[RMDB]
RNA sequence: GGGAACGACUCGAGUAGAGUCGAAAACGUGAACAUCGCUCUGCUAAGUCCCGUCGUUCUUCCAGUCAGAGCGAGAUUGUAAGCAACCUUAUGCGCAAUGAAGACAUAGAGGGACUUCUACAACAAGGAUUAUAUUACGUUUCGACGUAAUAUAAUCAAAAGAAACAACAACAACAAC
Reactivity to DMS in 0.01 (KOAc 150mM, MgCl2 10mM, bicine 150mM(pH8.5), 24C), signal-to-noise 9, nucleotides 027 to 126: c140g010u040g010a120a090c180a120u000c000g010c000u000c000u000g000c170u020a050a040g000u010c040c030c050g000u000c030g010u010u000c010u000u020c030c070a110g010u010c010a010g000a010g010c000g010a030g000a050u020u010g000u010a080a140g020c060a070a160c110c070u020u020a050u010g010c020g000c070a080a070u020g010a110a080g010a090c070a080u010a050g010a060g010g000g000a070c030u000u000c140u020a060c140a060a080c250a110a090g010
Reactivity to 2A3 in 0.01 (KOAc 150mM, MgCl2 10mM, bicine 150mM(pH8.5), 24C), signal-to-noise 9, nucleotides 027 to 126: c060g110u120g120a070a020c020a110u010c000g000c000u000c000u020g050c060u080a040a030g040u050c010c010c010g060u040c010g020u030u030c010u110u030c020c000a060g080u120c010a010g000a000g010c030g010a010g010a020u020u050g030u080a090a050g010c010a030a110c030c050u140u150a070u130g020c050g000c030a030a080u170g040a130a040g040a040c040a050u130a030g120a060g020g000g000a010c000u040u020c040u080a120c020a140a010c020a080a040g160
Source information:
Chemical mapping of a 177-nucleotide RNA with DMS and 2A3. Conditions: 150 mM KOAc, 10 mM MgCl2 and 150 mM bicine (pH 8.5), 24 C. For 2A3, 84,013 sequencing reads were counted.